Source: RMDB library OK2TST, as collected in RNAgym. The record gives the reactivity of an RNA of 177 nucleotides to DMS. The reactions ran in a buffer of 150 mM KOAc, 10 mM MgCl2 and 150 mM bicine (pH 8.5), at 24 C. The DMS profile rests on 658 reads.
RNA sequence: GGGAACGACUCGAGUAGAGUCGAAAAGCUCCAUUGAUGGUUGUAAAAUGGGAAAACGGAGCCCAAUCAUUAUUGCCAGCCCCAUUGGGAAUAUCUGUAGGGGAUACUGUAUACUAUGGGAAAGAAGAUUCCCGUACGAUUUCGAUCGUACGGGAAUAAAAGAAACAACAACAACAAC
Reactivity to DMS in 0.01 (KOAc 150mM, MgCl2 10mM, bicine 150mM(pH8.5), 24C), signal-to-noise 1, nucleotides 027 to 126: g030c070u010c010c020a160u000u000g020a070u030g040g000u000u000g010u020a130a110a090a060u030g030g020g030a090a080a120a150c090g000g010a120g010c010c020c020a100a090u000c110a050u000u010a030u020u010g020c080c020a070g000c130c020c020c030a010u000u030g030g010g010a110a080u000a040u000c060u010g020u010a090g020g020g000g000a070u000a040c050u000g020u000a050u000a060c080u000a030u000g030g010g000a000a050a080g000a060a110g000